Overview:
The record gives the reactivity of an RNA of 177 nucleotides to 2A3 and DMS.
RNA sequence: GGGAACGACUCGAGUAGAGUCGAAAAAUUGUGCGGUCUCUGAGAGAGGAGAACCUGUCUGAGAGAGCUUACCGCUUUUCAUAGUGGCUCACUGAGAGACUCUGAGGCUCCUCUCGUUCCCAACCAAUAUUUAUCGACGAUUCGUCGUCGAUAAAUAAAAAGAAACAACAACAACAAC
Reactivity to 2A3 in 0.01 (KOAc 150mM, MgCl2 10mM, bicine 150mM(pH8.5), 24C), signal-to-noise 2, nucleotides 027 to 126: a000u180u130g060u060g050c000g000g040u020c020u020c020u170g010a010g010a000g010a010g060g010a100g050a190a300c020c010u050g100u000c010u070g020a000g000a000g000a020g030c060u120u170a050c020c010g020c090u050u030u020u030c100a110u150a090g050u040g060g000c030u030c040a050c100u080g020a050g000a010g020a280c020u030c090u180g110a090g140g000c000u000c000c010u000c000u000c000g000u000u030c030c010c000a000a010c010c010a030a020
Reactivity to DMS in 0.01 (KOAc 150mM, MgCl2 10mM, bicine 150mM(pH8.5), 24C), signal-to-noise 2, nucleotides 027 to 126: a080u010u000g030u020g040c110g020g010u000c040u010c030u010g000a130g010a030g020a030g010g010a120g000a090a100c020c010u000g000u000c010u000g000a030g000a070g000a060g000c110u010u000a120c070c030g000c030u000u010u030u000c100a120u020a040g020u010g020g010c070u000c030a080c060u010g000a090g010a150g000a020c040u000c070u000g000a150g010g020c010u000c000c010u000c020u000c010g020u000u000c000c000c000a090a100c220c130a090a130